[RMDB]
About this RNA: This 207-nucleotide RNA was probed chemically with DMS and 2A3. The 2A3 profile rests on 729 reads. In probing experiments dimethyl sulfate is read out at A N1 and C N3, which are open when not base-paired. Reactivities are rounded to 0.1 and cut off at 0 and 3.

RNA sequence: GGGAACGACUCGAGUAGAGUCGAAAAAGAGUGUUAGGGUUGGAAAAGUGGGGGUGUGGUAAAUAAUUCCUAGGGAAUGUUAGAUCUUACCAAGUAAGCACCCGAAGAUGAACAGCACAAUUCCAAGGAACAAUGCCUGUCCGUGCAAAUUCCAGAGCAGUCGAAUAGUUUUCGAACUAUUCGACUGAAAAGAAACAACAACAACAAC
Reactivity to DMS in 0.01 (KOAc 150mM, MgCl2 10mM, bicine 150mM(pH8.5), 24C), signal-to-noise 2, nucleotides 027 to 156: a060g010a080g040u000g020u000u000a060g020g020g040u010u010g040g000a100a070a150a160g040u000g000g000g000g000g010u000g050u000g010g000u000a000a050a060u010a060a070u000u000c010c000u010a200g050g020g000a030a020u010g010u000u010a120g000a150u000c050u000u010a040c040c030a070a150g010u000a080a110g030c000a040c010c030c040g010a020a040g040a110u000g020a030a070c020a100g020c000a030c040a070a150u000u000c020c020a110a070g050g000a030a060c030a080a140u000g000c070c030u000g000u000c030c030g020u000g010c010a040a040a110u000u000c020c020a090g020a140g030
Reactivity to 2A3 in 0.01 (KOAc 150mM, MgCl2 10mM, bicine 150mM(pH8.5), 24C), signal-to-noise 2, nucleotides 027 to 156: a000g050a010g010u100g030u030u090a080g030g000g020u040u070g030g000a030a110a110a090g030u110g000g020g000g040g000u010g030u040g020g030u040a030a060a030u070a000a100u030u030c020c010u040a030g190g010g000a040a040u010g060u130u150a080g000a100u020c000u010u000a030c040c010a140a000g000u010a000a070g030c020a020c030c010c080g030a040a020g000a020u090g060a100a000c010a050g030c050a060c030a080a060u070u010c030c000a040a000g050g010a000a050c040a020a110u090g040c000c000u050g070u040c000c030g030u000g000c000a080a000a120u150u030c050c050a020g060a040g000